RNA sequence: GGGAACGACUCGAGUAGAGUCGAAAAGCCUCGCUUUUUUCCUGUAAAACACCGCAACGCAGGAAAAGCGCAUGCUUAUCGGGACAACAACCCAACGCGGCAGGUGUACCGUUGGGCAAAACGUUUACUACGCGGGAACGUUCGCGUUCCCGCGUAGAAAAGAAACAACAACAACAAC
Reactivity to 2A3 in 0.01 (KOAc 150mM, MgCl2 10mM, bicine 150mM(pH8.5), 24C), signal-to-noise 1, nucleotides 027 to 126: g000c000c000u000c000g000c080u000u170u000u000u000u050c000c000u000g020u020a000a000a170a030c120a070c040c050g040c000a100a020c260g030c030a000g020g000a010a010a010a010g000c000g050c060a020u100g000c000u020u030a050u190c100g160g000g070a160c100a160a020c000a060a040c090c000c000a000a000c030g020c080g040g000c260a130g030g000u140g060u140a160c030c000g000u000u000g000g020g000c000a000a000a000a020c000g050u000u010u000a050
Notes
An RNA of 177 nucleotides, treated with 2A3 and read out base by base. For 2A3, 495 sequencing reads were counted.